[RMDB]
Background
This 177-nucleotide RNA was probed chemically with DMS and 2A3. DMS adducts were read by reverse transcription with MarathonRT.

RNA sequence: GGGAACGACUCGAGUAGAGUCGAAAACAUUUUAGGGCAAUGCCCGGUGCGCGCUGGUGAGGGCGCAGGAAUAUCUGUUCGAAUGCCAUACGUUGUGCAGGUGUGGUUAAUCGGAAGCGCUCACUGACACCCAGCAGUAUUUCGAUACUGCUGGGUGAAAAGAAACAACAACAACAAC
Reactivity to DMS in 0.01 (KOAc 150mM, MgCl2 10mM, bicine 150mM(pH8.5), 24C), signal-to-noise 1, nucleotides 027 to 126: c040a030u020u020u000u000a160g020g000g020c030a140a140u010g010c000c000c010g000g000u000g020c070g000c040g020c040u010g020g020u020g000a060g010g000g010c080g050c010a060g000g010a110a180u010a090u020c050u000g000u000u000c030g030a070a070u000g000c010c060a020u000a040c020g020u020u000g000u000g020c140a080g000g000u000g000u000g000g020u000u000a090a130u000c000g000g000a070a100g010c120g000c000u000c010a050c020u000g000a300
Reactivity to 2A3 in 0.01 (KOAc 150mM, MgCl2 10mM, bicine 150mM(pH8.5), 24C), signal-to-noise 1, nucleotides 027 to 126: c000a000u220u160u120u280a260g000g010g000c080a120a080u140g020c010c000c000g000g000u020g030c010g000c040g000c030u030g020g180u110g060a080g080g110g000c010g000c020a000g040g010a230a050u170a130u230c020u030g040u000u060c020g020a010a040u170g050c000c010a000u020a030c130g200u120u090g200u160g100c110a090g000g010u010g000u030g040g000u110u160a020a080u110c000g000g040a000a000g000c050g030c000u000c030a010c040u080g020a010